[RMDB]
RNA sequence: GGGAACGACUCGAGUAGAGUCGAAAACGCCCGGGUUCUACACGGGCGAGUACGACAUGCCCGACCCCAACGACGGGUUCCUGUGGGAUGACGUGGACAGCAGCGUGUUCUCGCCGCGUCCCACCACCACCGUGUGGAAGAAAGAGGGCGGGGACCGCAGUUCCUGUAUUUUCGAAUACAGGAACUGAAAAGAAACAACAACAACAAC
Reactivity to DMS in 0.01 (KOAc 150mM, MgCl2 10mM, bicine 150mM(pH8.5), 24C), signal-to-noise 1, nucleotides 027 to 156: c040g040c000c020c010g060g040g040u000u000c110u000a080c030a030c020g020g010g020c020g000a050g020u000a110c040g040a080c030a300u000g040c000c020c040g050a110c030c010c000c040a070a130c090g000a110c090g020g040g030u000u000c040c030u000g060u000g000g060g020a110u000g020a060c000g020u000g000g000a060c020a090g020c000a180g030c130g020u000g030u000u000c000u000c010g000c000c000g020c010g030u000c000c010c000a120c000c030a060c010c010a190c110c130g000u000g010u000g010g000a080a030g010a060a030a110g000a090g030g010g030c040g020g000g020g050a050c020c020g010
Reactivity to 2A3 in 0.01 (KOAc 150mM, MgCl2 10mM, bicine 150mM(pH8.5), 24C), signal-to-noise 3, nucleotides 027 to 156: c030g030c020c000c010g000g040g020u240u200c150u200a050c090a020c090g010g010g000c010g000a010g020u040a020c080g030a010c010a060u050g140c000c010c010g020a090c030c010c000c000a140a120c130g190a040c060g060g010g000u060u120c010c050u140g010u180g030g010g030a020u050g030a040c020g020u090g030g040a040c020a080g120c000a010g010c090g080u130g020u110u000c040u000c010g000c000c010g080c030g080u010c000c000c000a020c000c000a010c010c010a190c050c100g080u160g000u040g170g040a080a100g070a040a140a030g110a180g000g040g000c000g000g000g000g010a000c000c000g000